[RMDB]
RNA sequence: GGGAACGACUCGAGUAGAGUCGAAAAGAUAUGGAUGAAUUAAGGGAGAGGAUUGUCGGAAACGACAAAUCUCAUCGAUCUUACUGUUCAUCCUAAGUCAAAACUCCGCGGACUUCGGUCCGCGGAGGAUAUUUGACGUCUUCGGACGUCAAAUAUCAAAAGAAACAACAACAACAAC
Reactivity to DMS in 0.01 (KOAc 150mM, MgCl2 10mM, bicine 150mM(pH8.5), 24C), signal-to-noise 2, nucleotides 027 to 126: g010a030u020a300u000g000g010a020u000g000a010a010u020u000a020a010g030g000g010a300g020a010g000g010a020u000u000g000u020c000g000g000a020a050a180c000g020a000c010a010a010a060u000c000u000c060a150u000c130g010a300u040c000u000u000a030c300u000g040u000u000c030a000u000c030c000u010a030a120g000u010c020a110a100a110a300c000u000c010c000g010c000g000g000a000c000u000u010c290g000g020u000c000c000g030c000g010g000a000g000
Reactivity to 2A3 in 0.01 (KOAc 150mM, MgCl2 10mM, bicine 150mM(pH8.5), 24C), signal-to-noise 2, nucleotides 027 to 126: g040a010u080a010u230g020g030a000u010g010a000a020u090u130a050a050g070g070g040a170g020a030g000g010a010u000u020g000u020c010g010g000a090a090a040c010g000a010c010a060a170a120u000c030u000c020a200u140c030g040a050u030c020u070u010a100c190u090g100u040u020c000a000u020c000c000u000a080a020g030u000c000a000a020a200a210c000u030c000c000g040c090g000g040a040c020u200u180c300g020g030u030c030c000g100c040g000g000a000g000